[RMDB]
Overview
The record gives the reactivity of an RNA of 177 nucleotides to 2A3 and DMS. The RNA was probed in 150 mM KOAc, 10 mM MgCl2 and 150 mM bicine (pH 8.5) at 24 C. For 2A3, 1,410 sequencing reads were counted. The DMS profile rests on 1,909 reads.

RNA sequence: GGGAACGACUCGAGUAGAGUCGAAAAGGAUGGUGGUGCAACAAAUUUCUAUCGCCUCGACGGUGCCGAUUGGCACGCUGCAUAUGCCGCUCAAACAGUUGCACGACAAAGGCGUAAAAGUGAUGACCCUCCAAACACGAUUCGUCGUGUUUGGAGGAAAAGAAACAACAACAACAAC
Reactivity to 2A3 in 0.01 (KOAc 150mM, MgCl2 10mM, bicine 150mM(pH8.5), 24C), signal-to-noise 2, nucleotides 027 to 126: g040g010a130u080g040g000u030g040g010u020g050c010a000a000c000a040a230a040u130u170u000c020u060a110u040c030g020c030c000u030c040g050a060c060g020g000u010g000c040c000g300a300u130u270g020g010c000a020c000g080c050u080g040c020a020u060a020u280g020c020c030g030c020u040c110a060a120a090c040a020g000u030u010g000c040a010c040g020a000c040a020a070a010g000g000c010g020u010a030a140a000a000g030u080g050a090u120g030a030c010
Reactivity to DMS in 0.01 (KOAc 150mM, MgCl2 10mM, bicine 150mM(pH8.5), 24C), signal-to-noise 3, nucleotides 027 to 126: g000g030a080u000g010g020u000g000g060u000g020c030a050a050c030a110a080a160u010u000u020c070u000a080u010c020g000c000c010u000c080g010a090c140g020g020u000g010c000c010g020a140u000u000g020g030c040a020c060g000c010u010g000c130a180u000a050u000g000c010c050g010c050u010c070a100a070a100c200a060g010u000u000g030c020a010c010g030a090c140a070a080a090g020g020c020g030u000a040a060a050a070g010u010g000a100u000g000a180c140

It was measured as part of the RMDB library OK2TRN. For 2A3 the reverse transcriptase was SuperScript II with manganese.